[RMDB]
RNA sequence: GGGAACGACUCGAGUAGAGUCGAAAAGAAAAUCCCAAGCAUAGCAUAGCAUUGCAUAGCAUAGCAUAGCAUAGCAUAGCAUAGCAUAGCAUAGCAUAGCAUAGCAUAGCAUAGCAUACAAAAAAAAACAUAUAUCAGUCUUCGGACUGAUAUAUGUAAAAGAAACAACAACAACAAC
Reactivity to 2A3 in 0.01 (KOAc 150mM, MgCl2 10mM, bicine 150mM(pH8.5), 24C), signal-to-noise 2, nucleotides 027 to 126: g040a010a100a000a050u000c010c010c000a000a010g040c020a050u110a030g000c010a030u050a070g010c000a040u010u080g010c020a030u070a050g000c000a030u060a030g000c010a030u070a000g000c020a060u040a000g000c020a040u050a020g030c010a050u050a010g000c000a020u060a020g000c010a030u070a010g000c000a050u060a030g000c000a010u030a040g020c000a030u050a040g010c010a030u070a050g000c000a030u060a070c140a100a100a000a000a000a000a000a020
Reactivity to DMS in 0.01 (KOAc 150mM, MgCl2 10mM, bicine 150mM(pH8.5), 24C), signal-to-noise 3, nucleotides 027 to 126: g000a120a090a100a160u020c000c000c000a090a140g000c080a060u010a050g000c040a060u000a060g000c010a160u020u000g000c040a040u030a090g010c010a050u000a060g020c030a010u010a040g010c060a070u000a070g000c020a040u010a110g010c060a040u000a050g020c020a040u010a080g000c030a050u000a050g010c040a030u010a090g000c030a030u010a090g010c050a040u010a070g000c010a010u000a070g000c030a050u020a050c080a050a010a020a000a050a050a060a100